Structure probing data (2A3 and DMS) for a 170-nucleotide construct.
Values cover nucleotides 27 to 129.
Source: RMDB library 15KLIB, as collected in RNAgym.
For DMS, 37,988 sequencing reads were counted.
For DMS the reverse transcriptase was MarathonRT.
RNA sequence: GGGAACGACUCGAGUAGAGUCGAAAACUUACCUACGGGAACUGCUGGUUUCCCCUUAUGUCCAGUCCCUCUCCCGUCCUGGUGAAGGGAGAUUCCGGAACGUUUAGCAUUUGAGGGACAAAGCCGCUACCAAGUCGGUUCGCCGACUUGAAAAGAAACAACAACAACAAC
Reactivity to 2A3 in 0.01 (KOAc 150mM, MgCl2 10mM, bicine 150mM(pH8.5), 24C), signal-to-noise 9, nucleotides 027 to 129: c020u060u100a100c000c020u020a050c080g010g000g020a040a040c030u060g050c010u090g010g020u030u060u040c000c000c000c010u060u070a020u130g060u020c040c030a020g020u000c010c000c000u010c010u010c010c000c000g070u040c010c020u150g070g020u220g050a050a050g020g020g000a030g000a020u100u030c020c010g030g010a050a040c020g030u060u130u150a040g000c030a050u010u020u080g100a120g010g010g010a000c030a010a060a000g020c020c010g000c010u010a050c000
Reactivity to DMS in 0.01 (KOAc 150mM, MgCl2 10mM, bicine 150mM(pH8.5), 24C), signal-to-noise 7, nucleotides 027 to 129: c160u040u070a000c040c040u030a080c130g010g030g000a050a040c090u000g010c080u000g030g020u000u000u000c010c010c010c030u020u040a060u040g000u040c060c170a130g000u000c010c000c010u010c010u010c030c010c020g000u060c000c000u040g030g010u060g050a050a020g030g000g020a090g000a020u030u030c010c090g030g040a000a000c020g010u030u060u030a120g030c040a050u000u000u040g030a040g010g000g010a080c240a030a050a010g010c050c040g020c060u030a150c080